[RMDB]
RNA sequence: GGGAACGACUCGAGUAGAGUCGAAAAGCGGGUCUGAACGCCGUGGAUGCUGCACGCGGUGCAGAAACUGAGCAGGGAUAACAGCACCUCCUGGCUGAGCGACAGGAACGUCGUCAUGUCCCGUGACUCCUAGACCCCUAUUCGUAGGGGUCUAGGAAAAAGAAACAACAACAACAAC
Reactivity to 2A3 in 0.01 (KOAc 150mM, MgCl2 10mM, bicine 150mM(pH8.5), 24C), signal-to-noise 1, nucleotides 027 to 126: g040c010g020g000g040u000c010u020g050a120a030c000g000c000c020g000u040g030g030a070u110g040c030u050g000c020a040c040g300c030g150g040u000g000c010a000g050a120a120a030c050u110g010a030g100c050a020g080g000g050a080u090a210a060c020a070g120c040a040c020c090u070c000c000u020g100g000c030u100g060a020g050c030g040a040c000a010g070g040a060a020c030g050u030c000g020u010c000a020u140g000u010c000c000c010g000u010g000a030c000
Reactivity to DMS in 0.01 (KOAc 150mM, MgCl2 10mM, bicine 150mM(pH8.5), 24C), signal-to-noise 2, nucleotides 027 to 126: g010c020g000g000g000u000c030u000g020a110a110c060g000c030c010g010u010g020g000a130u000g020c040u000g000c050a060c030g020c120g010g010u000g000c000a050g000a070a080a130c040u010g010a090g000c050a140g000g000g030a080u000a070a100c120a090g020c060a090c090c060u000c020c000u000g000g000c020u000g000a080g020c100g030a090c050a070g000g000a050a050c020g000u000c100g000u010c030a030u000g000u000c000c000c000g040u010g000a070c150

The record gives the reactivity of an RNA of 177 nucleotides to 2A3 and DMS. The data come from the RNA Mapping Database (RMDB), library OK2TRN. For DMS the reverse transcriptase was MarathonRT. The reactions ran in a buffer of 150 mM KOAc, 10 mM MgCl2 and 150 mM bicine (pH 8.5), at 24 C. The 2A3 profile rests on 1,378 reads.